[RMDB]
RNA sequence: GGGAACGACUCGAGUAGAGUCGAAAAAGGCACAGUUUAACUGGGCCCUUUGUUCAGGGCCUCUCACAAGGCCACAUCCAAUCCCUGGGCUGGGGCUGGAGUCUCAUCAGAAGGCUUCACUGGAGAAGAGUCACUUCUGUGCUCACUCACAUGGCUCUAAUUCCAAGGGAUUCGUCCCUUGGAAUUAAAAAGAAACAACAACAACAAC
Reactivity to DMS in 0.01 (KOAc 150mM, MgCl2 10mM, bicine 150mM(pH8.5), 24C), signal-to-noise 2, nucleotides 027 to 156: a000g000g040c000a040c010a030g010u010u000u010a140a160c030u000g000g010g000c000c020c000u000u000u000g020u000u010c050a060g000g070g030c000c010u020c050u000c130a130c120a070a040g020g010c000c010a100c110a060u020c040c010a090a100u010c010c010c000u000g010g010g000c030u010g020g010g020g020c050u000g030g020a020g010u000c010u000c020a230u010c140a160g010a090a050g020g010c020u000u000c020a090c050u000g000g000a110g010a190a080g000a080g040u000c040a070c080u010u010c070u010g060u000g010c040u000c040a100c060u010c030a070c060a110u010g010g000c020u010c040
Reactivity to 2A3 in 0.01 (KOAc 150mM, MgCl2 10mM, bicine 150mM(pH8.5), 24C), signal-to-noise 3, nucleotides 027 to 156: a000g020g000c010a000c000a010g020u090u150u230a180a060c140u090g010g030g020c010c000c020u080u110u200g050u040u060c050a030g010g020g000c080c030u000c010u050c010a160c030a050a060g040g000c030c010a040c030a040u110c050c000a030a090u000c000c000c010u010g030g000g040c040u010g040g000g000g000c040u000g020g000a000g010u000c010u000c030a230u060c030a040g160a230a010g110g000c000u010u050c030a050c070u090g050g000a040g000a120a020g010a030g070u070c020a000c080u080u030c050u110g030u030g020c040u060c070a080c050u070c000a080c010a110u080g020g000c010u000c020